[RMDB]
RNA sequence: GGGAACGACUCGAGUAGAGUCGAAAACAAAGGUUGGUUUACAAGGGAAACCUGAAACUUGUGGUUUAUUUAAAGAUUGUUCGAAGAGCGAACAAUACAUACCACCUGCUUAUGCAACGACAUAUAUGAGCUUAUCUGAUAGUUUUAAAACAAGUGACUCCCCUACUCCAUUCGUGGAGUAGGGGAGAAAAGAAACAACAACAACAAC
Reactivity to 2A3 in 0.01 (KOAc 150mM, MgCl2 10mM, bicine 150mM(pH8.5), 24C), signal-to-noise 1, nucleotides 027 to 156: c150a010a150a000g090g000u040u040g010g010u060u120u090a140c110a070a090g080g000g020a100a070a080c040c040u090g050a090a000a020c030u050u070g000u030g030g080u020u030u010a140u110u160u200a070a060a050g040a000u000u000g020u000u000c050g130a190a150g000a100g300c000g000a010a010c000a000a000u060a070c020a030u140a020c000c000a000c000c000u010g000c040u210u000a040u080g000c000a020a100c090g160a070c040a050u050a000u000a060u080g020a000g010c030u090u020a000u200c020u030g010a020u030a040g130u000u050u030u220a080a140a060a020c070a040a020g010u000g100a040